Source: RMDB library M2PK50, as collected in RNAgym. Structure probing data (2A3 and DMS) for a 177-nucleotide construct. For 2A3 the reverse transcriptase was SuperScript II with manganese. DMS adducts were read by reverse transcription with MarathonRT. The DMS profile rests on 1,320 reads.
[RMDB]
RNA sequence: GGGAACGACUCGAGUAGAGUCGAAAAGACCUUCAGUUCGCUGAAGGUCGAUGAUGGUAACAGAGAUUACCAUCUGUUAAGUGAUAUGGAUAAGAUCUCUCAGUGAACGUGCUUUCGAGCACGUUAAAGAUGGAGAUUCGUUCGCGAAUCUCCAUCUAAAAGAAACAACAACAACAAC
Reactivity to 2A3 in 0.01 (KOAc 150mM, MgCl2 10mM, bicine 150mM(pH8.5), 24C), signal-to-noise 1, nucleotides 027 to 126: g040a020c010c000u010u000c010a060g000u010u110c200g070c040u010g010a020a030g010g000u010c000g000a000u010g000a010u000g000g000u000a010a010c020a070g180a040g000a290u000u000a000c000c000a010u000c000u080g030u020u200a130a100g040u010g060a040u050a020u220g190g070a120u150a100a140g020a060u070c020u000c000u010c050a120g030u080g160a020a000c000g000u000g020c020u170u020u170c260g070a040g000c000a000c000g000u000u040a020a030
Reactivity to DMS in 0.01 (KOAc 150mM, MgCl2 10mM, bicine 150mM(pH8.5), 24C), signal-to-noise 1, nucleotides 027 to 126: g000a020c000c000u010u020c000a000g040u000u000c230g030c000u000g030a020a000g010g010u000c020g000a020u000g000a020u000g010g000u000a010a000c070a200g020a120g000a260u010u010a000c000c020a000u000c000u020g000u030u010a060a100g020u000g010a080u000a030u000g000g000a060u030a070a060g000a090u000c000u000c030u000c070a150g020u000g000a030a000c000g020u000g010c020u000u010u000c170g010a080g000c010a010c000g010u000u000a020a060